Notes: Chemical mapping of a 177-nucleotide RNA with DMS and 2A3. For DMS the reverse transcriptase was MarathonRT. The 2A3 profile rests on 5,613 reads. The DMS profile rests on 24,872 reads.
RNA sequence: GGGAACGACUCGAGUAGAGUCGAAAAGCGUAGGAGGGAGUACAAGGCAAGGUUGUCAGGAAUCAUUUAUCGUUUGGGUUUUAUCCAAGGGCAGUAGUGGCAUCCAUCUGACCCAACUCUGGUUUGCUGGAACAAUUAAUUUCGAUUAAUUGUUCCAAAAAGAAACAACAACAACAAC
Reactivity to DMS in 0.01 (KOAc 150mM, MgCl2 10mM, bicine 150mM(pH8.5), 24C), signal-to-noise 9, nucleotides 027 to 126: g010c090g020u010a070g020g010a080g020g010g010a070g010u000a060c110a080a100g000g010c080a070a080g010g010u000u010g010u010c050a070g010g000a070a080u010c080a080u000u000u010a070u010c090g010u000u000u000g010g000g010u000u000u010u010a070u010c050c050a050a070g000g000g010c080a050g010u000a050g020u000g010g010c060a050u000c040c040a060u000c050u000g000a100c030c020c020a050a100c110u000c080u000g010g010u000u000u000g010c150
Reactivity to 2A3 in 0.01 (KOAc 150mM, MgCl2 10mM, bicine 150mM(pH8.5), 24C), signal-to-noise 4, nucleotides 027 to 126: g030c030g040u060a010g000g040a020g020g070g010a050g010u050a050c030a080a020g040g000c010a020a030g060g000u040u040g040u050c030a020g040g050a040a040u070c050a060u060u130u170a180u090c110g070u000u040u050g040g000g020u040u050u130u150a070u080c040c030a040a040g010g020g000c030a020g050u130a020g030u050g040g010c020a030u060c010c000a050u020c050u060g090a110c000c000c010a030a050c030u050c040u050g110g050u080u090u100g030c050

2A3 adducts were read by reverse transcription with SuperScript II with manganese.